[RMDB]
RNA sequence: GGGAACGACUCGAGUAGAGUCGAAAAGAUAUGGAGACAUACGUAGUUCGUCAGAAUGGAGCGACUGCUUCGGAAACGAAGCACUCGCUAUGAAGUUCUGAGCGAACUACGUAUGUCUCCUAAGUCAGCACUAAUUGUAGUUCGCUACAAUUAGUGCAAAAGAAACAACAACAACAAC
Reactivity to DMS in 0.01 (KOAc 150mM, MgCl2 10mM, bicine 150mM(pH8.5), 24C), signal-to-noise 2, nucleotides 027 to 126: g010a030u000a300u030g000g010a020g010a040c000a000u010a020c020g010u000a010g000u010u000c000g000u000c000a000g010a020a010u020g010g020a010g010c010g000a020c170u020g010c000u000u000c010g000g000a130a120a270c020g000a010a010g020c020a050c090u000c000g020c010u010a080u000g010a240a210g000u000u000c000u000g010a100g010c020g000a010a000c000u010a010c000g000u000a000u000g030u000c010u010c000c000u000a040a040g020u000c020a200